[RMDB]
RNA sequence: GGGAACGACUCGAGUAGAGUCGAAAAAUGCACUGGUUCGCCAGUGCAUGAUUACCGAGAAAGUACCUCGGUUUAAAAGUGCAACCCUUGGAAACAAGGGAAUUCCGAACCGAUUCGUCGGUUCGAACGUAGUUUUGUCCUUCGGGACAAAACUACGAAAAGAAACAACAACAACAAC
Reactivity to DMS in 0.01 (KOAc 150mM, MgCl2 10mM, bicine 150mM(pH8.5), 24C), signal-to-noise 2, nucleotides 027 to 126: a010u000g000c000a020c010u000g020g010u000u030c230g020c010c000a020g030u000g000c000a000u010g000a200u000u000a150c000c010g010a010g000a160a130a160g020u030a070c060c000u000c030g000g000u000u010u020a020a030a120a050g000u000g030c150a130a150c010c000c010u000u000g000g000a180a060a220c000a020a020g000g000g030a060a030u010u000c100c000g010a020a010c010c000g010a040u000u020c160g030u000c010g000g000u000u000c000g000a010a070